RNA sequence: GGGAACGACUCGAGUAGAGUCGAAAAGAUAUGGACGCUGACCACGGUGAACUACACUCCAAUGUCGGAAACGACAUUGAGAGUGCACUAUCAAGCGUCCUAAGUCAAACGGAACUUCGGUUCCGAAGGACAACCCUAAGUUCGCUUAGGGUUGUCCAAAAGAAACAACAACAACAAC
Reactivity to DMS in 0.01 (KOAc 150mM, MgCl2 10mM, bicine 150mM(pH8.5), 24C), signal-to-noise 1, nucleotides 027 to 126: g000a140u000a300u000g010g000a050c010g100c000u000g000a170c300c100a110c250g000g000u000g000a010a040c080u000a300c060a000c030u000c030c010a000a000u030g010u000c010g000g000a100a100a220c000g000a000c000a000u000u000g000a140g050a060g000u000g000c010a000c040u190a080u000c080a240a000g000c030g040u000c000c030u000a040a000g000u000c040a010a150a130c040g060g030a040a000c010u010u000c150g000g010u000u000c000c000g000a060a130
Reactivity to 2A3 in 0.01 (KOAc 150mM, MgCl2 10mM, bicine 150mM(pH8.5), 24C), signal-to-noise 1, nucleotides 027 to 126: g040a040u060a010u170g000g000a000c000g000c010u000g090a040c040c080a140c300g010g040u040g040a100a060c170u260a050c300a000c000u040c000c000a000a020u000g000u030c010g030g030a050a080a130c030g020a000c000a000u010u100g030a270g000a000g070u020g000c000a010c030u030a070u160c080a130a030g050c020g000u000c000c010u000a060a010g020u020c020a010a000a210c040g000g000a000a000c000u070u100c300g090g030u020u000c030c000g020a070a020
This 177-nucleotide RNA was probed chemically with DMS and 2A3. Conditions: 150 mM KOAc, 10 mM MgCl2 and 150 mM bicine (pH 8.5), 24 C.